Conditions: 150 mM KOAc, 10 mM MgCl2 and 150 mM bicine (pH 8.5), 24 C.
An RNA of 177 nucleotides, treated with DMS and read out base by base.
The DMS profile rests on 1,028 reads.
Reactivities are given for positions 27 through 126.

RNA sequence: GGGAACGACUCGAGUAGAGUCGAAAAGCACAUCCACCGCCUCUUCAUCCAUGGUGUCAUACUGGCCGACCAGGGCACCUACGGCUGCGAGAGCCACCACGAUCGCACCCUGGCCAGGCUCAGCGUGACUUUGCUCAGGGUUCGCCCUGAGCAAAGUAAAAGAAACAACAACAACAAC
Reactivity to DMS in 0.01 (KOAc 150mM, MgCl2 10mM, bicine 150mM(pH8.5), 24C), signal-to-noise 1, nucleotides 027 to 126: g000c060a110c160a130u020c020c010a060c060c040g040c000c030u010c050u020u000c030a080u000c020c030a100u000g030g020u010g060u020c020a020u010a130c010u000g020g010c010c040g000a060c020c010a010g000g010g020c110a080c080c020u000a020c140g010g010c020u000g000c000g020a080g010a150g000c000c020a080c140c110a060c050g000a150u030c070g020c040a100c010c000c010u000g030g020c030c010a130g040g000c010u000c030a000g060c050g000u010g010